[RMDB]
RNA sequence: GGGAACGACUCGAGUAGAGUCGAAAAGACAGAUUGGCCUGUCAACUAAUACUUAAAGGUCUAUCCGGUGACUUCAAAUACCUACGUAAUCAAUAUCGUACCAAAACGAACAUGAAACUUUAAAAUAACGAUGCUACGCAUUCGUGCGUAGCAUCGUAAAAGAAACAACAACAACAAC
Reactivity to 2A3 in 0.01 (KOAc 150mM, MgCl2 10mM, bicine 150mM(pH8.5), 24C), signal-to-noise 1, nucleotides 027 to 126: g170a000c000a000g050a070u040u130g000g000c000c000u000g000u030c140a000a000c020u150a000a300u070a260c070u040u120a050a090a000g030g000u000c000u000a050u040c000c000g100g000u050g000a090c000u120u000c000a020a300a000u020a020c000c020u120a160c000g160u300a190a000u070c100a040a020u080a000u200c000g030u030a130c170c240a260a000a000a000c030g050a070a000c000a120u300g040a060a060a060c060u300u110u050a050a280a040a000u040a000